[RMDB]
RNA sequence: GGGAACGACUCGAGUAGAGUCGAAAAGGCCAUGAACUGGUCGUCCAUCGUUACAGCAAACACAUUCACUUCCCGCCGCUGUGGCCAUUACACCCAGGCCGGCCUAAUAGGAAGAGAAAAAGGAAAGAAUAUGCCCGUAUAGCGUACAAUCGCUUCCGUUGAAAUAGUUUUUCGAAACUAUUUCAACAAAAGAAACAACAACAACAAC
Reactivity to 2A3 in 0.01 (KOAc 150mM, MgCl2 10mM, bicine 150mM(pH8.5), 24C), signal-to-noise 7, nucleotides 027 to 156: g010g000c010c010a050u150g070a070a070c070u010g020g000u020c010g030u020c040c030a150u110c080g100u090u100a070c040a060g050c040a110a130a040c040a020c030a230u110u110c050a060c080u040u030c010c020c010g020c030c020g000c040u030g020u150g070g010c010c010a050u080u140a050c040a050c050c020c010a020g050g010c050c010g020g000c000c010u100a150a090u110a100g030g020a030a010g040a030g030a050a060a020a020a000g110g020a090a100a020g050a070a050u120a060u140g030c000c010c010g020u090a060u100a130g000c000g010u030a090c120a070a130u100c010g000c010u040u020c050c040
Reactivity to DMS in 0.01 (KOAc 150mM, MgCl2 10mM, bicine 150mM(pH8.5), 24C), signal-to-noise 4, nucleotides 027 to 156: g010g010c020c030a060u020g010a110a150c160u000g010g020u000c010g020u010c040c020a080u010c070g020u000u000a090c020a070g060c030a110a070a070c070a070c040a160u000u010c040a160c060u000u000c000c010c010g000c060c030g000c050u010g010u000g030g040c020c030a140u010u010a130c110a100c030c020c020a160g060g000c060c020g020g000c030c050u000a050a130u010a060g000g010a060a060g010a150g000a060a040a050a060a070g000g020a120a050a130g010a100a070u000a030u000g010c040c010c080g030u000a130u000a040g010c000g030u000a050c070a070a140u000c080g000c020u000u000c020c050
Chemical mapping of a 207-nucleotide RNA with 2A3 and DMS. The 2A3 profile rests on 6,106 reads. The reactions ran in a buffer of 150 mM KOAc, 10 mM MgCl2 and 150 mM bicine (pH 8.5), at 24 C.